[RMDB]
Conditions: 150 mM KOAc, 10 mM MgCl2 and 150 mM bicine (pH 8.5), 24 C. The record gives the reactivity of an RNA of 177 nucleotides to 2A3 and DMS. Source: RMDB library OK2TRN, as collected in RNAgym. For DMS, 8,559 sequencing reads were counted.
RNA sequence: GGGAACGACUCGAGUAGAGUCGAAAAGCACGCAAGUCCAGCUAAGAUUCCGGACAAGAGAGGAGUACGGCGAACUUUUCCGAGUUAGCGAUCAGCACAAUCGGGAAUACGGAAUCCUUGAGAUCAACCUAUUGCAGAAAUUCGUUUCUGCAAUAGGAAAAGAAACAACAACAACAAC
Reactivity to 2A3 in 0.01 (KOAc 150mM, MgCl2 10mM, bicine 150mM(pH8.5), 24C), signal-to-noise 5, nucleotides 027 to 126: g050c030a010c130g040c050a090a030g050u000c020c030a010g000c040u050a090a030g050a200u130u000c070c020g040g000a020c040a070a040g120a000g010a010g070g020a040g030u100a040c030g020g030c070g100a070a060c010u050u020u020u000c010c010g010a020g030u050u080a020g010c080g060a260u260c080a010g040c020a010c070a070a070u030c010g000g000g030a020a000u050a040c030g000g020a040a020u020c010c000u080u090g110a120g010a140u090c020a010a060
Reactivity to DMS in 0.01 (KOAc 150mM, MgCl2 10mM, bicine 150mM(pH8.5), 24C), signal-to-noise 8, nucleotides 027 to 126: g020c090a050c100g020c080a080a120g010u000c030c040a100g010c080u010a080a110g000a100u000u000c020c020g000g010a100c100a090a140g010a190g000a070g010g010a070g010u000a080c070g010g000c080g000a080a090c140u010u000u000u010c010c020g010a070g010u000u000a180g000c010g000a090u010c240a110g010c030a060c190a070a090u000c010g010g000g010a030a050u010a080c060g010g010a070a080u010c030c060u000u000g010a140g010a120u000c090a060a140